[RMDB]
This 177-nucleotide RNA was probed chemically with DMS and 2A3. 2A3 adducts were read by reverse transcription with SuperScript II with manganese. Source: RMDB library OK1LIB, as collected in RNAgym. The DMS profile rests on 1,292 reads.
RNA sequence: GGGAACGACUCGAGUAGAGUCGAAAAUCUGCGCUUUAACUCGUUGAAGCUUACCAUGUGCACACAUUGCCCAUCUUGCUAUUGCUUACAGAUCCAGGGGGAAAUUUAAGCACAGGGAAGGUGGAAAGACGCCCAUAUAGUUCGCUAUAUGGGCGUCAAAAGAAACAACAACAACAAC
Reactivity to DMS in 0.01 (KOAc 150mM, MgCl2 10mM, bicine 150mM(pH8.5), 24C), signal-to-noise 1, nucleotides 027 to 126: u080c010u000g000c090g030c040u000u010u000a010a020c040u030c070g010u000u000g020a090a030g000c040u000u020a090c150c040a040u000g000u000g000c010a090c120a020c300a120u010u000g000c110c000c010a090u040c040u000u030g000c120u010a150u000u000g000c010u000u010a070c090a050g000a230u000c050c050a140g000g000g010g000g000a000a000a270u000u000u000a000a020g000c060a000c090a040g000g000g010a060a040g000g020u000g000g010a190a050a080
Reactivity to 2A3 in 0.01 (KOAc 150mM, MgCl2 10mM, bicine 150mM(pH8.5), 24C), signal-to-noise 4, nucleotides 027 to 126: u050c050u110g030c010g010c150u080u110u090a110a040c050u090c090g210u090u020g050a030a000g070c000u060u050a070c040c030a140u050g030u030g080c050a050c000a010c000a180u070u130g010c000c000c000a010u040c010u030u010g110c030u050a080u220u150g000c020u120u030a040c030a050g030a060u090c060c060a180g000g150g100g000g000a000a010a010u050u070u070a050a030g000c000a030c030a040g010g030g000a000a000g020g000u010g000g010a040a100a000